[RMDB]
RNA sequence: GGGAACGACUCGAGUAGAGUCGAAAAUGAAUAAUGUGGAUGACGCCGUGCAGGCGGCGCGUGAACUGAUUGCUCAGGGGCCAGAAAUUGUACUGGUAAAACAUCUCGCCCGCGCCGGUUACAGUUCGGCGUGCUAAAUCUUCGGAUUUAGCACGCCAAAAGAAACAACAACAACAAC
Reactivity to 2A3 in 0.01 (KOAc 150mM, MgCl2 10mM, bicine 150mM(pH8.5), 24C), signal-to-noise 1, nucleotides 027 to 126: u240g040a090a050u190a000a010u270g050u290g120g000a040u090g020a040c010g000c000c000g010u020g120c140a020g060g250c000g000g000c080g000c050g040u030g020a000a100c030u000g030a050u060u020g190c080u000c000a020g000g000g130g020c000c000a000g110a000a020a080u180u270g020u160a000c000u000g000g080u020a170a180a070a000c000a080u060c040u000c030g090c000c120c000g000c000g000c000c000g030g010u060u000a040c000a000g030u070u060c030
Chemical mapping of a 177-nucleotide RNA with 2A3. Conditions: 150 mM KOAc, 10 mM MgCl2 and 150 mM bicine (pH 8.5), 24 C.